The record gives the reactivity of an RNA of 207 nucleotides to DMS and 2A3. The reactions ran in a buffer of 150 mM KOAc, 10 mM MgCl2 and 150 mM bicine (pH 8.5), at 24 C. For 2A3, 3,294 sequencing reads were counted. Values are in units of 0.01, from 0 to 300, in steps of 10.
RNA sequence: GGGAACGACUCGAGUAGAGUCGAAAAUCAAUCUGUGUCUGGAAGUGCCCCCUACCAAGGGAGUACCACCAGCAGCUCGUUGCAUUCGAGUUCACAGGUCAAACGAUAGCGGCCACUUCGGUGGUUGAGAUAUGAUCGGCCUCCAGCUGUCACCUAGGUAAUUAGUUCUGUUCGCAGAACUAAUUACAAAAGAAACAACAACAACAAC
Reactivity to DMS in 0.01 (KOAc 150mM, MgCl2 10mM, bicine 150mM(pH8.5), 24C), signal-to-noise 2, nucleotides 027 to 156: u000c050a030a100u000c010u010g000u000g040u000c020u000g000g030a250a150g010u000g010c000c000c000c010c000u010a200c280c270a120a060g010g030g040a030g000u010a020c020c010a270c000c040a040g030c190a000g000c010u040c030g000u000u000g030c090a290u000u020c020g000a070g030u010u000c080a050c040a040g030g020u010c030a100a080a140c010g020a080u000a060g030c060g000g000c000c010a020c010u000u020c210g000g000u010g010g030u000u010g010a120g030a100u000a050u000g010a090u010c060g020g030c010c020u000c010c010a110g000c000u000g030u010c020a120c050c050u020a130g010
Reactivity to 2A3 in 0.01 (KOAc 150mM, MgCl2 10mM, bicine 150mM(pH8.5), 24C), signal-to-noise 4, nucleotides 027 to 156: u090c010a010a020u020c010u030g030u010g130u050c010u000g040g010a070a040g010u000g010c000c000c020c000c000u050a150c020c070a050a010g010g000g010a030g000u010a000c020c030a040c010c000a010g030c040a010g020c010u010c010g090u090u250g130c080a110u190u080c010g020a000g000u070u060c030a020c010a020g010g030u040c040a090a120a030c060g050a050u050a080g050c020g010g030c020c000a010c000u070u070c200g090g000u020g000g000u030u070g030a040g020a040u120a070u150g140a100u070c030g050g000c020c010u050c030c020a030g000c020u040g020u050c010a070c030c020u030a030g130